[RMDB]
RNA sequence: GGGAACGACUCGAGUAGAGUCGAAAACGGCUUGUAGGGCUAACGGGGAAACGCGGACGUAUGAGGGGAGAACCCGCCCCGUUGGCCAGGAGUCUGACGCAUCGCGGGAGCUGUCAGGGCUCCCCGGGCUGUGAGUUCCAUUCGUGGAGCUCGCGGUAAAAGAAACAACAACAACAAC
Reactivity to DMS in 0.01 (KOAc 150mM, MgCl2 10mM, bicine 150mM(pH8.5), 24C), signal-to-noise 9, nucleotides 027 to 126: c100g000g000c020u000u000g010u040a110g010g000g010c000u000a000a010c000g000g010g000g000a070a080a100c140g010c180g000g000a150c100g020u020a140u030g020a180g000g000g010g000a280g020a070a060c010c000c000g000c000c000c000c010g000u000u000g000g000c000c000a010g000g000a030g000u000c010u010g010a200c130g000c050a070u030c010g010c160g000g000g000a010g010c000u010g010u040c280a140g010g000g000c000u000c000c000c000c010g000g000
Reactivity to 2A3 in 0.01 (KOAc 150mM, MgCl2 10mM, bicine 150mM(pH8.5), 24C), signal-to-noise 9, nucleotides 027 to 126: c030g010g000c020u060u080g130u300a200g140g020g000c000u010a000a000c000g000g010g010g030a070a120a040c090g030c110g080g090a100c060g120u200a160u260g110a130g020g040g020g010a210g050a110a080c000c000c000g010c000c000c000c000g000u000u000g000g000c000c000a000g020g010a000g000u010c040u100g040a040c070g010c090a100u140c030g010c180g030g010g010a000g000c010u050g150u300c170a160g040g100g000c000u000c000c000c000c000g000g020

Annotation:
Structure probing data (DMS and 2A3) for a 177-nucleotide construct. The RNA was probed in 150 mM KOAc, 10 mM MgCl2 and 150 mM bicine (pH 8.5) at 24 C. For 2A3, 49,699 sequencing reads were counted. Values cover nucleotides 27 to 126.